Chemical mapping of a 177-nucleotide RNA with DMS and 2A3. It was measured as part of the RMDB library OK2TRN.

RNA sequence: GGGAACGACUCGAGUAGAGUCGAAAACCUCAUGGAGAACUCUUGGGCAAGCCUCACGAGGGCAUCGUAGAUACUCUGGUCCCCAUGAGGAUGGUACUUACCGAGCACGUCACCAACGAUACGACCGGUGCUGCUACUCAUUCGUGAGUAGCAGCACAAAAGAAACAACAACAACAAC
Reactivity to DMS in 0.01 (KOAc 150mM, MgCl2 10mM, bicine 150mM(pH8.5), 24C), signal-to-noise 1, nucleotides 027 to 126: c010c000u000c010a000u010g000g000a060g010a060a080c080u000c130u020u030g020g000g110c040a190a230g000c030c000u000c010a120c180g030a300g000g030g010c080a050u000c100g000u000a120g020a220u000a080c050u000c000u000g020g000u030c030c000c030c010a070u000g020a000g000g000a000u000g020g030u000a010c040u010u000a010c050c000g030a020g010c010a040c040g020u020c120a230c020c020a120a160c130g000a020u000a040c090g020a080c210c080g050
Reactivity to 2A3 in 0.01 (KOAc 150mM, MgCl2 10mM, bicine 150mM(pH8.5), 24C), signal-to-noise 1, nucleotides 027 to 126: c000c000u030c000a060u020g000g000a120g010a060a070c000u050c070u280u130g000g030g020c030a060a050g020c010c000u060c000a060c120g060a280g020g020g010c000a070u020c060g090u100a030g020a170u130a110c020u020c010u040g030g040u040c000c000c000c000a010u000g000a010g020g000a000u010g070g000u080a020c000u010u020a020c000c000g000a010g000c130a020c050g030u040c030a070c060c000a030a060c020g060a060u100a100c010g070a050c070c090g020
The DMS profile rests on 595 reads. The RNA was probed in 150 mM KOAc, 10 mM MgCl2 and 150 mM bicine (pH 8.5) at 24 C.